This 207-nucleotide RNA was probed chemically with DMS and 2A3.
For DMS the reverse transcriptase was MarathonRT.
The DMS profile rests on 2,048 reads.
2A3 adducts were read by reverse transcription with SuperScript II with manganese.
The RNA was probed in 150 mM KOAc, 10 mM MgCl2 and 150 mM bicine (pH 8.5) at 24 C.

[RMDB]
RNA sequence: GGGAACGACUCGAGUAGAGUCGAAAAUGCCUUAGCAACCCUUGCAAAAACAAUGGCAUGUGCAGGGAUGGGUGGAACAGAUAUGUCUGUGAUUGUUCCGGAACAGGCUAUCUUGGCAGGUCCUGUGAGAGAGGUAGGAUUCUAAAACCCCAGCAGAAAUCGAGUAUCAGUUCGCUGAUACUCGAUUAAAAGAAACAACAACAACAAC
Reactivity to DMS in 0.01 (KOAc 150mM, MgCl2 10mM, bicine 150mM(pH8.5), 24C), signal-to-noise 1, nucleotides 027 to 156: u020g020c020c010u000u010a080g030c040a140a100c050c000c010u000u020g010c030a040a100a090a120a080c070a050a060u000g000g020c010a100u010g000u010g000c060a100g040g030g000a060u000g020g050g020u000g000g010a080a090c050a020g000a030u010a020u000g040u000c000u020g040u000g000a190u000u020g030u000u010c070c060g030g030a200a060c040a020g000g020c000u010a010u000c030u010u000g000g050c070a100g000g020u000c030c060u020g030u000g010a150g020a160g000a000g020g020u000a100g020g010a040u000u000c060u010a010a080a070a100c030c000c040c000a060g000c090a160g000a080
Reactivity to 2A3 in 0.01 (KOAc 150mM, MgCl2 10mM, bicine 150mM(pH8.5), 24C), signal-to-noise 3, nucleotides 027 to 156: u070g010c010c000u060u060a020g020c030a030a100c030c010c000u070u090g030c050a080a050a060a040a040c070a110a130u090g030g010c030a020u070g020u030g040c020a020g010g000g050a050u050g020g000g030u090g050g010a070a050c010a050g040a040u040a040u260g030u000c030u010g060u020g070a130u090u110g040u120u040c070c000g020g010a030a000c000a000g000g040c000u000a010u020c030u040u070g040g020c040a000g000g010u030c020c030u030g010u080g000a090g000a010g010a000g040g030u020a040g030g000a010u130u000c030u080a000a100a070a110c020c010c030c020a020g050c030a010g130a060